[RMDB]
RNA sequence: GGGAACGACUCGAGUAGAGUCGAAAAGAAUUUUAGAAAAGCAAGGCCGAAAAAGCAGCACCCGAAAUGCUGAGGGCUAAUUUGGGGUUUAGGAGCAACCUUUCCUGGAAAAAGUGGAAAGGAAAGAGAUCACUAUCCUGUUCGCAGGAUAGUGAUCAAAAGAAACAACAACAACAAC
Reactivity to DMS in 0.01 (KOAc 150mM, MgCl2 10mM, bicine 150mM(pH8.5), 24C), signal-to-noise 2, nucleotides 027 to 126: g000a080a030u000u030u000u120a210g030a060a060a040a120g020c190a060a090g020g010c000c020g010a000a030a070a120a110g010c000a040g050c050a120c000c020c100g020a040a090a200u010g000c020u010g000a040g020g010g010c000u010a010a070u000u030u020g010g020g000g000u000u000u000a080g000g000a090g000c170a100a100c030c010u000u000u010c010c000u000g000g050a140a140a030a130a220g000u000g000g040a020a000a040g000g020a000a050a040g000a140
Reactivity to 2A3 in 0.01 (KOAc 150mM, MgCl2 10mM, bicine 150mM(pH8.5), 24C), signal-to-noise 2, nucleotides 027 to 126: g020a020a110u000u230u100u150a020g020a020a070a000a000g070c030a030a030g000g000c000c050g230a000a000a000a160a000g000c000a000g000c020a110c000c080c070g020a000a150a060u120g040c040u050g070a080g000g180g000c040u000a000a160u000u000u100g050g000g000g020u110u040u060a070g020g030a090g060c020a060a050c000c000u020u000u030c010c000u020g060g030a200a210a000a000a010g250u160g080g000a000a030a000g000g070a000a020a000g050a000